[RMDB]
RNA sequence: GGGAACGACUCGAGUAGAGUCGAAAACUCAAUGAGUCAAGCAGCAAAUUACAAUGGAUCAGGGAACUUGAUAGAUGGUACUGAGUAAGAGUUAUGGCUAGGUGGUCAAGCAUUUUGGGUUCUAGUCCCAGCUUUGGUGCCACUUCAUCUUGUAAGACCCUAAUUAGGACUUCGGUCCUAAUUAGGGAAAAGAAACAACAACAACAAC
Reactivity to DMS in 0.01 (KOAc 150mM, MgCl2 10mM, bicine 150mM(pH8.5), 24C), signal-to-noise 1, nucleotides 027 to 156: c020u000c060a060a130u000g010a170g020u000c040a060a140g020c020a080g010c040a050a050a060u000u010a080c080a100a100u000g010g000a080u000c010a080g010g010g000a060a060c040u010u000g000a120u020a080g010a120u000g010g030u000a040c040u000g020a030g020u000a050a100g000a140g010u030u000a090u000g010g000c040u000a080g010g100u000g010g010u000c020a030a040g010c010a140u000u000u000u010g010g090g040u000u000c120u000a130g010u000c010c000c040a000g000c060u010u010u030g080g020u000g000c000c000a090c040u000u000c040a040u000c060u000u000g080u010a070a130g000a230
Reactivity to 2A3 in 0.01 (KOAc 150mM, MgCl2 10mM, bicine 150mM(pH8.5), 24C), signal-to-noise 4, nucleotides 027 to 156: c030u050c030a040a120u150g020a010g040u060c060a090a010g010c040a000g040c030a070a100a050u100u070a110c050a040a090u090g060g010a040u060c030a050g030g000g050a030a020c040u050u060g030a050u080a100g090a060u040g010g050u050a040c010u060g020a020g080u090a090a000g040a000g100u030u120a080u060g030g000c030u030a060g000g070u020g000g030u060c030a030a000g030c030a070u080u050u150u130g060g000g010u210u030c070u080a030g050u050c030c010c010a000g020c020u060u020u080g040g000u100g010c000c000a030c000u040u030c020a050u000c010u020u050g060u080a040a060g130a130
An RNA of 207 nucleotides, treated with DMS and 2A3 and read out base by base. The data come from the RNA Mapping Database (RMDB), library OK3TST.